[RMDB]
RNA sequence: GGGAACGACUCGAGUAGAGUCGAAAAAGAACUGCAAACGAUAAUAAUCUCUAUGUUGGUGCCCCAGCUUUAGCUGCCGCUUAAUCCGACGAGGAUUGAAGGUGUGACGGGCAACAGACCCGGAAAAGAUAUGCAGUCAUUUCGAUGACUGCAUAUCAAAAGAAACAACAACAACAAC
Reactivity to 2A3 in 0.01 (KOAc 150mM, MgCl2 10mM, bicine 150mM(pH8.5), 24C), signal-to-noise 5, nucleotides 027 to 126: a000g040a050a010c030u050g010c040a040a070a040c100g050a060u080a140a100u170a060a080u170c030u000c000u030a070u100g040u020u120g060g020u050g010c010c010c000c000a010g000c030u110u150u080a030g000c030u030g030c040c020g030c040u030u060a000a010u000c020c010g050a110c170g020a150g030g000a020u000u020g060a010a010g000g010u040g000u010g090a020c020g010g000g010c010a030a030c030a050g130a160c020c000c000g020g000a030a080a010a000
Reactivity to DMS in 0.01 (KOAc 150mM, MgCl2 10mM, bicine 150mM(pH8.5), 24C), signal-to-noise 6, nucleotides 027 to 126: a040g000a080a110c050u020g000c080a060a070a120c080g000a080u020a090a110u030a080a090u010c040u010c050u030a070u000g010u010u010g010g000u000g000c030c010c020c040a070g000c050u000u010u010a090g000c030u010g000c040c010g000c080u000u010a020a010u010c020c000g010a110c230g000a250g000g000a010u000u000g010a060a110g000g010u000g010u010g000a110c060g000g000g020c020a070a070c210a060g000a120c000c030c000g010g000a080a040a080a080
Chemical mapping of a 177-nucleotide RNA with 2A3 and DMS. Reactivities are given for positions 27 through 126. Source: RMDB library OK1LIB, as collected in RNAgym. Conditions: 150 mM KOAc, 10 mM MgCl2 and 150 mM bicine (pH 8.5), 24 C. DMS adducts were read by reverse transcription with MarathonRT. Reactivities are rounded to 0.1 and cut off at 0 and 3.